[RMDB]
RNA sequence: GGGAACGACUCGAGUAGAGUCGAAAAACACCAAAACUGAAAACGGCAGGCAAUCCUUCCACGACGAUACUUACUUUCCUUUGAUCGUCGUUACUACUGGCAUAGCCACAAAGGAGAACAAACAUGAGCGCGGACACUGACUUCGGUCAGUGUCCAACAAUGCCUAACGGUUCGCCGUUAGGCAUUGAAAAGAAACAACAACAACAAC
Reactivity to DMS in 0.01 (KOAc 150mM, MgCl2 10mM, bicine 150mM(pH8.5), 24C), signal-to-noise 1, nucleotides 027 to 156: a080c060a150c030c010a030a050a020a220c080u000g020a040a060a040a100c020g030g060c000a050g010g050c050a090a120u000c060c020u010u010c050c100a150c000g000a050c000g020a030u000a060c010u000u010a080c110u000u000u000c060c040u000u010u000g010a070u000c000g040u000c010g060u020u010a080c050u000a140c080u000g010g030c070a210u000a180g060c000c020a100c110a050a030a050g050g040a050g000a070a150c020a050a060a120c070a110u030g000a090g000c020g010c070g010g020a060c000a000c000u000g000a020c010u000u010c210g030g020u000c000a000g000u000g010u010c000c000a040a050
Reactivity to 2A3 in 0.01 (KOAc 150mM, MgCl2 10mM, bicine 150mM(pH8.5), 24C), signal-to-noise 2, nucleotides 027 to 156: a010c120a100c020c010a080a080a000a070c090u090g070a000a000a000a130c020g010g030c010a000g030g000c030a070a150u130c000c000u050u060c060c030a000c010g030a000c000g000a000u110a110c030u080u050a030c050u100u180u100c030c010u070u030u080g030a000u010c000g040u020c000g000u030u060a080c020u000a000c010u010g010g010c080a190u060a190g020c000c000a050c050a060a030a010g050g020a020g020a080a020c030a090a110a000c010a100u150g110a070g030c120g000c040g030g000a000c000a000c000u000g000a000c000u030u020c050g030g000u000c000a000g000u000g000u000c000c010a000a010
Annotation: An RNA of 207 nucleotides, treated with DMS and 2A3 and read out base by base. DMS adducts were read by reverse transcription with MarathonRT.